[RMDB]
RNA sequence: GGGAACGACUCGAGUAGAGUCGAAAAAGUGACUUUCCAGGUGUCACACAGUGAGUGGCAUAAUCAGAGUACAAUUUGAGUCAUGCCCAUACAUCACAUUGCCAGUGAUUACCCAAGGAAAGUGACGCCUUUCAUUACGCUUCGGCGUAAUGAAAGGAAAAGAAACAACAACAACAAC
Reactivity to DMS in 0.01 (KOAc 150mM, MgCl2 10mM, bicine 150mM(pH8.5), 24C), signal-to-noise 1, nucleotides 027 to 126: a120g020u000g010a050c000u010u000u000c020c010a140g030g010u000g000u000c000a000c000a140c060a080g020u010g000a040g030u030g060g000c040a030u020a120a130u000c010a010g000a000g020u000a200c300a100a120u000u010u000g000a020g000u000c240a000u020g000c050c000c120a120u000a060c170a200u030c080a020c000a010u000u000g000c210c140a080g000u000g000a000u000u000a040c010c010c070a200a020g010g000a010a030a000g000u000g010a020c080g000
Reactivity to 2A3 in 0.01 (KOAc 150mM, MgCl2 10mM, bicine 150mM(pH8.5), 24C), signal-to-noise 1, nucleotides 027 to 126: a010g050u000g070a000c000u000u000u020c000c000a030g000g010u000g010u000c010a010c000a010c000a020g000u000g010a060g040u190g030g010c000a000u020a020a060u050c020a010g000a040g080u100a120c060a150a180u060u000u000g040a050g090u160c040a000u020g000c000c000c000a090u200a050c000a090u040c030a010c020a010u030u190g080c090c030a020g000u000g040a000u030u200a050c010c000c040a140a040g030g020a040a000a000g010u000g020a000c000g010